RNA sequence: GGGAACGACUCGAGUAGAGUCGAAAAGGGUGCGUAGGCGGCCUGUUAAGUAGGGCGUGAAAUCUGUCGGCUCAACCGGCAAAUUGCGUUCUAAACUGGCAGGCUUGAGUGGGUCAGGGGUGUGUGGCGAUAGCUGUAAGUUCGCUUACAGCUAUCGAAAAGAAACAACAACAACAAC
Reactivity to DMS in 0.01 (KOAc 150mM, MgCl2 10mM, bicine 150mM(pH8.5), 24C), signal-to-noise 4, nucleotides 027 to 126: g020g000g010u020g020c110g020u010a120g000g020c070g010g000c010c020u010g000u000u000a020a010g000u010a010g010g000g000c010g010u000g000a050a060a050u000c110u000g020u000c000g010g010c150u020c300a090a200c010c000g020g010c010a000a010a090u000u000g000c010g010u000u010c010u010a010a000a050c020u000g010g010c010a010g000g000c020u000u000g010a060g010u000g010g000g010u000c110a100g000g000g000g000u010g010u000g020u010g000g010
Reactivity to 2A3 in 0.01 (KOAc 150mM, MgCl2 10mM, bicine 150mM(pH8.5), 24C), signal-to-noise 2, nucleotides 027 to 126: g070g020g020u200g060c080g090u140a060g070g070c020g010g030c000c000u000g030u020u020a040a030g030u000a010g010g010g010c030g020u030g120a080a040a010u020c030u020g010u000c000g020g000c040u040c300a060a150c040c000g010g000c000a000a010a050u020u020g000c000g000u000u020c020u020a040a050a030c000u010g010g000c000a000g000g000c020u000u040g010a010g010u120g000g000g050u190c230a070g020g010g020g010u120g020u070g040u060g160g010

This 177-nucleotide RNA was probed chemically with DMS and 2A3. Reactivities are given for positions 27 through 126. The reactions ran in a buffer of 150 mM KOAc, 10 mM MgCl2 and 150 mM bicine (pH 8.5), at 24 C. It was measured as part of the RMDB library RFMREP. For DMS the reverse transcriptase was MarathonRT.